Description: The record gives the reactivity of an RNA of 207 nucleotides to DMS and 2A3. Conditions: 150 mM KOAc, 10 mM MgCl2 and 150 mM bicine (pH 8.5), 24 C. For 2A3 the reverse transcriptase was SuperScript II with manganese. Reactivities are given for positions 27 through 156.
RNA sequence: GGGAACGACUCGAGUAGAGUCGAAAAAAACUCAAAUGCGACCGCAUCUGUUCGGAGGCUGAAUAAGUAUGAAGUCCGAAGGCGACGCAUCAGAACGGCGCCGGCCAUCUGGAAAGUUUGAAGCGUAUGAUGCGAGGACACGCUGCCGUGAUUGAUCCGUUAACAUCUACUUCGGUAGAUGUUAACGAAAAGAAACAACAACAACAAC
Reactivity to DMS in 0.01 (KOAc 150mM, MgCl2 10mM, bicine 150mM(pH8.5), 24C), signal-to-noise 2, nucleotides 027 to 156: a040a090a090c010u000c060a070a060a090u010g030c000g020a200c060c040g030c070a120u000c040u000g030u010u000c030g030g020a200g010g000c060u000g000a090a040u010a090a040g040u000a200u010g020a110a120g020u010c020c030g010a090a120g010g020c000g000a040c000g000c020a060u000c090a200g000a140a060c070g010g030c030g050c020c010g060g040c030c020a080u000c090u020g060g010a120a110a110g010u020u010u010g020a120a100g050c030g010u000a090u010g000a060u010g000c000g020a130g010g000a110c050a080c110g050c010u010g010c010c030g010u010g020a300u000u000g000a280u000c020
Reactivity to 2A3 in 0.01 (KOAc 150mM, MgCl2 10mM, bicine 150mM(pH8.5), 24C), signal-to-noise 2, nucleotides 027 to 156: a010a000a010c090u130c040a080a060a060u060g000c020g020a060c000c000g060c030a030u000c040u140g110u120u040c000g010g040a000g050g060c050u040g040a130a060u150a120a010g070u130a090u180g090a070a020g100u010c070c020g030a030a020g040g040c010g020a020c000g000c010a040u040c030a020g050a080a030c010g050g020c000g000c000c050g020g040c000c000a020u010c010u010g020g110a120a040a050g040u150u150u150g070a110a070g000c000g020u020a070u160g040a040u000g050c050g030a050g010g060a040c050a010c140g020c010u040g000c040c000g070u060g000a060u080u150g020a050u110c000
2A3 is a SHAPE reagent: it acylates the 2'-hydroxyl of flexible nucleotides of all four kinds.